Structure probing data (DMS and 2A3) for a 207-nucleotide construct.
Values cover nucleotides 27 to 156.
It was measured as part of the RMDB library OK3TST.
The reactions ran in a buffer of 150 mM KOAc, 10 mM MgCl2 and 150 mM bicine (pH 8.5), at 24 C.
[RMDB]
RNA sequence: GGGAACGACUCGAGUAGAGUCGAAAAUGCACCUUCACCUGGAGCAGGGCAGUGCAAGCCCCUCCGGCUAACUCCUUCCUCACACCUACAUUCCCCUGACAAUGUCACAUGCUGUGCAAGUUGGCAGGGCCAGAGGGGCCACAGAUGCCAACAAAAACAGUGCAGUAGGAUUCGUCCUACUGCACUGAAAAGAAACAACAACAACAAC
Reactivity to DMS in 0.01 (KOAc 150mM, MgCl2 10mM, bicine 150mM(pH8.5), 24C), signal-to-noise 1, nucleotides 027 to 156: u000g000c030a110c020c010u000u000c060a040c090c020u010g030g010a210g020c080a100g070g020g040c030a140g070u000g030c040a130a120g040c030c000c010c010u000c000c050g050g000c030u000a070a140c040u020c010c020u000u000c020c030u010c040a100c040a120c020c000u070a100c040a190u000u000c030c000c020c020u000g030a090c010a100a080u000g030u000c060a070c070a200u000g040c030u000g000u000g000c070a080a140g000u000u000g000g060c000a070g010g000g020c000c030a040g010a090g020g040g020g030c010c020a050c040a090g000a110u010g000c000c020a050a070c070a040a050a050a120a250
Reactivity to 2A3 in 0.01 (KOAc 150mM, MgCl2 10mM, bicine 150mM(pH8.5), 24C), signal-to-noise 2, nucleotides 027 to 156: u060g000c020a020c030c000u100u150c060a060c010c030u040g080g000a060g080c060a090g030g010g000c000a080g050u020g090c040a060a000g000c020c000c010c010u010c010c000g000g020c010u040a110a060c040u050c010c020u030u050c030c020u040c000a040c010a050c050c000u070a050c040a150u070u050c020c060c000c020u000g020a030c080a120a110u120g040u070c000a050c010a080u070g110c000u000g030u040g080c000a050a060g030u000u000g000g010c050a020g030g010g020c000c000a040g050a040g030g150g000g010c010c000a020c000a020g120a010u030g000c000c000a010a020c010a010a050a070a000a000